The record gives the reactivity of an RNA of 177 nucleotides to 2A3 and DMS. Source: RMDB libraries RFM100 and RFMREP, as collected in RNAgym. DMS adducts were read by reverse transcription with MarathonRT. Conditions: 150 mM KOAc, 10 mM MgCl2 and 150 mM bicine (pH 8.5), 24 C.

RNA sequence: GGGAACGACUCGAGUAGAGUCGAAAAGAAUAUAUAGGGCGUGUGGAGGGAACGUGGGGAAGUGAAACAUCUCAGUACCCACAGGAAGAGAAAACAACAUGUGAUUCCGUGAGUAGUGGCGAGCGAAGCAAGGUUAUUUCUUCGGAAAUAACCUUGCAAAAGAAACAACAACAACAAC
Reactivity to 2A3 in 0.01 (KOAc 150mM, MgCl2 10mM, bicine 150mM(pH8.5), 24C), signal-to-noise 5, nucleotides 027 to 126: g010a040a000u150a010u060a030u100a120g060g020g010c090g040u110g030u080g030g110a140g030g000g010a080a010c030g010u020g000g020g020g000a030a060g130u060g110a050a110a020c090a210u100c010u000c040a010g030u000a010c000c010c000a000c010a010g020g050a040a050g050a020g030a030a080a020a000c070a030a010c020a030u170g040u090g080a090u100u030c030c030g010u040g070a030g040u070a010g010u010g020g010c030g010a020g020c040g020a070a000
Reactivity to DMS in 0.01 (KOAc 150mM, MgCl2 10mM, bicine 150mM(pH8.5), 24C), signal-to-noise 4, nucleotides 027 to 126: g000a090a070u030a150u020a100u010a110g020g000g000c080g000u000g040u020g000g000a120g010g010g010a090a080c100g010u010g010g010g000g020a080a160g020u010g020a090a110a130c140a050u010c010u000c050a080g010u010a170c020c000c020a020c030a110g030g020a050a060g000a130g000a040a040a050a080c120a070a060c110a090u020g000u010g000a100u010u010c020c010g020u010g000a040g010u000a030g010u000g000g000c070g010a080g000c080g010a050a100